[RMDB]
RNA sequence: GGGAACGACUCGAGUAGAGUCGAAAAGCAGAAGAUGAACCUGCCCAGUUGAACUCGGCUAUAGUUCGCAUGGCAGGAUUGAAUGACUUGAACACGGUUCAAGCACCGGAUUCAUCUAAUCUGCAAAACCUGGCCAACAUUGCACUUGAAGCUGCUGGUUUUCAUUCCAGUUCGCUGGAAUGAAAACAAAAGAAACAACAACAACAAC
Reactivity to 2A3 in 0.01 (KOAc 150mM, MgCl2 10mM, bicine 150mM(pH8.5), 24C), signal-to-noise 3, nucleotides 027 to 156: g030c000a000g000a010a000g000a000u000g010a020a070c000c000u010g020c000c020c030a020g030u200u300g030a010a010c010u030c060g170g030c120u170a120u170a280g010u000u010c010g000c030a050u020g020g010c010a000g000g000a010u070u090g030a060a050u070g120a170c010u000u000g000a010a010c260a070c210g300g020u020u000c000a000a010g000c000a020c000c060g090g050a050u010u040c000a000u000c000u000a040a080u000c000u000g000c000a000a010a020a040c010c010u030g050g050c050c000a060a030c040a160u020u130g000c040a030c050u080u140g070a100a030g050c040u030g010c000u030g020
Reactivity to DMS in 0.01 (KOAc 150mM, MgCl2 10mM, bicine 150mM(pH8.5), 24C), signal-to-noise 2, nucleotides 027 to 156: g040c040a030g050a090a100g000a050u010g010a020a140c030c010u000g010c010c020c060a300g060u000u000g040a020a010c020u000c080g040g060c120u020a150u020a070g010u000u010c060g070c040a230u020g000g010c020a000g030g010a080u020u020g020a080a100u000g000a080c000u000u000g010a020a010c010a140c180g030g000u000u010c000a050a030g010c040a050c050c050g030g020a270u000u000c010a020u000c020u000a100a110u000c020u000g040c070a120a010a120a200c000c010u000g010g000c020c000a090a150c100a100u010u000g000c030a050c120u000u000g000a050a300g050c000u010g020c000u000g020

Description:
Structure probing data (2A3 and DMS) for a 207-nucleotide construct. Values cover nucleotides 27 to 156. It was measured as part of the RMDB library OK3TST. For 2A3, 1,764 sequencing reads were counted.